[RMDB]
RNA sequence: GGGAACGACUCGAGUAGAGUCGAAAACAUGGAAGAGGGUGAUGUGAGUGCGGCCCUCGCGUACGCAGGGGAGGCGUACGAGAUCUCUCCGGAGAAGAAGGAGGUGCUGCUCCUCUAUGCCAUCCUGCGUCCUGAAACGUUUCGACGUUUCAGGACGAAAAGAAACAACAACAACAAC
Reactivity to 2A3 in 0.01 (KOAc 150mM, MgCl2 10mM, bicine 150mM(pH8.5), 24C), signal-to-noise 2, nucleotides 027 to 126: c040a050u160g110g080a130a060g050a060g140g020g020u060g030a050u060g050u010g080a020g020u080g000c030g010g000c020c000c000u000c000g020c020g000u020a000c000g010c040a100g110g100g010g030a100g080g000c020g000u020a010c010g000a020g000a030u010c000u000c000u000c050c130g080g010a050g000a060a010g030a030a030g080g020a000g000g030u180g010c020u020g010c000u050c050c000u000c010u030a030u100g040c000c010a000u040c000c010u050g040
Reactivity to DMS in 0.01 (KOAc 150mM, MgCl2 10mM, bicine 150mM(pH8.5), 24C), signal-to-noise 2, nucleotides 027 to 126: c160a080u010g000g010a130a080g020a020g010g000g020u010g020a070u000g020u000g000a100g040u010g020c010g020g000c000c010c000u000c000g000c030g000u000a010c020g000c020a170g010g000g000g010a140g020g010c010g000u000a000c030g000a090g000a090u000c030u000c010u020c200c120g030g020a050g000a070a110g000a140a080g010g000a000g030g020u010g000c010u030g010c030u000c300c040u000c030u000a040u000g010c000c000a020u000c000c030u000g010
Chemical mapping of a 177-nucleotide RNA with 2A3 and DMS. For DMS, 1,586 sequencing reads were counted. The reactions ran in a buffer of 150 mM KOAc, 10 mM MgCl2 and 150 mM bicine (pH 8.5), at 24 C. It was measured as part of the RMDB library OK2TST. Values cover nucleotides 27 to 126. For 2A3 the reverse transcriptase was SuperScript II with manganese.